[RMDB]
RNA sequence: GGGAACGACUCGAGUAGAGUCGAAAAGAUAUGGACGUCGUCUCUGGCGACGAUCUCGGAAACGAGGGAGCCAACGUGAGACGAGCGUCCUAAGUCAAAGCAGAGCUAUGUUCGCAUAGCUCUGCAAGGACAACCAAGAGUUCGCUCUUGGUUGUCCAAAAGAAACAACAACAACAAC
Reactivity to DMS in 0.01 (KOAc 150mM, MgCl2 10mM, bicine 150mM(pH8.5), 24C), signal-to-noise 1, nucleotides 027 to 126: g000a020u000a300u000g010g010a060c000g000u000c000g000u000c000u000c010u010g030g010c010g010a120c160g000a030u030c000u000c010g000g000a110a060a230c000g000a000g000g000g060a100g000c010c000a060a180c300g000u000g010a020g010a010c000g020a030g010c010g010u000c000c000u030a000a050g000u010c060a080a100a120g010c010a000g000a040g010c000u000a010u000g010u000u010c300g010c000a010u000a020g000c030u010c020u000g010c010a010a030
Reactivity to 2A3 in 0.01 (KOAc 150mM, MgCl2 10mM, bicine 150mM(pH8.5), 24C), signal-to-noise 2, nucleotides 027 to 126: g060a010u120a090u100g010g000a000c010g000u020c030g000u020c030u010c080u050g020g030c010g220a300c010g000a000u030c000u000c000g000g000a050a090a020c010g000a010g000g000g000a000g000c010c000a120a130c190g300u230g060a010g000a010c000g030a000g050c000g000u020c030c000u010a060a000g010u040c060a160a020a020g070c000a000g000a010g030c000u000a000u020g030u090u220c300g070c170a010u000a010g020c010u010c000u000g000c010a000a010
This 177-nucleotide RNA was probed chemically with DMS and 2A3. The 2A3 profile rests on 2,075 reads. The reactions ran in a buffer of 150 mM KOAc, 10 mM MgCl2 and 150 mM bicine (pH 8.5), at 24 C. For DMS the reverse transcriptase was MarathonRT. Values are in units of 0.01, from 0 to 300, in steps of 10. Source: RMDB library TTRDEL, as collected in RNAgym.